Source: RMDB library OK3TST, as collected in RNAgym. An RNA of 207 nucleotides, treated with DMS and 2A3 and read out base by base.
RNA sequence: GGGAACGACUCGAGUAGAGUCGAAAAUUCGGUCCUAUGGAGCGGACCGUUUGCUCCGUCAGGAUGUGGAGGUUUCGCGCCCUCCUCUGCGCGUAUGUACAUCGAUACGGUUAUGUCGCCUUUGUGUCGGCGUUUGACACUUACACAUACCGGAUAAGGGAGGAGUAGUAUUCGUACUACUCCUCCCAAAAGAAACAACAACAACAAC
Reactivity to DMS in 0.01 (KOAc 150mM, MgCl2 10mM, bicine 150mM(pH8.5), 24C), signal-to-noise 1, nucleotides 027 to 156: u000u000c010g010g020u000c000c000u000a260u010g010g030a130g030c300g020g010a050c020c050g000u020u000u000g000c030u000c010c030g050u010c080a080g030g050a100u000g030u000g030g000a070g000g010u000u000u000c020g010c020g030c000c000c030u040c010c000u010c040u000g040c070g040c060g040u020a010u010g060u000a090c110a120u000c040g020a230u010a110c050g010g040u000u000a050u000g020u000c080g020c060c060u000u000u000g010u010g020u020c030g020g040c150g090u020u020u010g030a090c110a020c010u000u000a060c030a040c040a040u000a120c000c060g010g000a020u000a040a250
Reactivity to 2A3 in 0.01 (KOAc 150mM, MgCl2 10mM, bicine 150mM(pH8.5), 24C), signal-to-noise 2, nucleotides 027 to 156: u010u000c000g010g000u000c000c020u130a220u250g190g030a090g140c090g000g010a010c000c000g000u020u010u000g020c020u030c000c010g070u060c060a090g010g020a010u000g030u040g020g010a010g010g020u010u050u000c010g000c000g000c020c000c010u000c000c040u020c020u010g170c160g000c000g010u130a040u060g010u010a000c020a130u080c070g130a240u100a300c090g070g040u060u090a020u040g030u030c000g010c040c000u010u030u000g120u070g010u030c000g020g030c020g000u070u000u200g000a000c000a000c000u030u140a000c000a000c000a020u040a300c000c040g030g000a090u110a070a110

Values cover nucleotides 27 to 156. The RNA was probed in 150 mM KOAc, 10 mM MgCl2 and 150 mM bicine (pH 8.5) at 24 C.